[RMDB]
RNA sequence: GGGAACGACUCGAGUAGAGUCGAAAACUGCCAUCCUACCCACUGAGGUGGUGUACAAGGUUGCUACUGUUGCUGCCAUAGUCCUAAUGUCCUCCUUCAUCUACAAGUCACCUAUGAAGGUCAAAAGCCAUACCGUUAGAUUCGUCUAACGGUAUGGAAAAGAAACAACAACAACAAC
Reactivity to DMS in 0.01 (KOAc 150mM, MgCl2 10mM, bicine 150mM(pH8.5), 24C), signal-to-noise 7, nucleotides 027 to 126: c070u000g000c050c030a060u000c040c070u000a120c050c010c020a070c090u010g000a120g030g020u010g000g020u000g030u010a050c140a110a100g000g000u000u010g030c040u000a080c080u010g010u000u000g010c030u000g010c040c030a090u000a070g010u010c030c020u010a100a100u010g010u010c020c030u000c020c010u000u000c020a040u000c090u010a050c150a090a110g020u010c070a080c050c030u000a070u000g010a090a060g010g000u000c100a050a070a100a140g010
Reactivity to 2A3 in 0.01 (KOAc 150mM, MgCl2 10mM, bicine 150mM(pH8.5), 24C), signal-to-noise 3, nucleotides 027 to 126: c000u030g040c010c000a060u070c000c030u030a090c020c030c000a070c070u080g060a050g150g000u050g000g030u110g020u050a080c050a120a000g010g020u020u060g030c010u030a070c050u070g100u270u140g050c040u050g000c010c000a040u060a050g050u000c020c000u050a120a050u120g070u090c020c010u040c000c000u030u040c000a070u020c010u040a060c020a080a050g060u030c040a060c050c000u040a050u190g050a050a010g080g020u050c040a070a090a030a020g030
This 177-nucleotide RNA was probed chemically with DMS and 2A3.
For 2A3 the reverse transcriptase was SuperScript II with manganese.
The reactions ran in a buffer of 150 mM KOAc, 10 mM MgCl2 and 150 mM bicine (pH 8.5), at 24 C.
Reactivities are given for positions 27 through 126.